[RMDB]
RNA sequence: GGGAACGACUCGAGUAGAGUCGAAAAGGCUGCGUAUCACUCUAGGGUACGUGAUAGUGCGAUAUAAGAAGCACUGGUACAUGCCGGCAGGGUCAGUUAAGAGAUGGCCGCAGUCUCGUGUCCCUGCAAAAGGAGUUCUCGUUCGCGAGAACUCCAACCUGAAGUAACCCUUCGGGGUUACUUCAGGAAAAGAAACAACAACAACAAC
Reactivity to 2A3 in 0.01 (KOAc 150mM, MgCl2 10mM, bicine 150mM(pH8.5), 24C), signal-to-noise 1, nucleotides 027 to 156: g000g000c000u010g020c100g070u090a110u150c010a000c020u030c070u130a140g070g020g060u030a020c040g000u080g040a040u130a050g000u000g000c000g000a010u040a020u080a300a070g090a090a000g000c000a030c000u000g000g020u070a030c060a080u130g000c030c000g020g000c030a060g040g030g030u150c120a090g010u220u150a070a010g030a070g030a140u010g020g020c030c010g000c020a020g000u010c010u000c000g050u030g040u000c020c010c040u050g070c100a020a000a000a170g010g000a000g010u000u000c020u000c010g000u030u020c150g030c030g100a000g000a000a000c000u000c000c000a000a010
An RNA of 207 nucleotides, treated with 2A3 and read out base by base.
The data come from the RNA Mapping Database (RMDB), library M2RFPK.
The 2A3 profile rests on 595 reads.
The reactions ran in a buffer of 150 mM KOAc, 10 mM MgCl2 and 150 mM bicine (pH 8.5), at 24 C.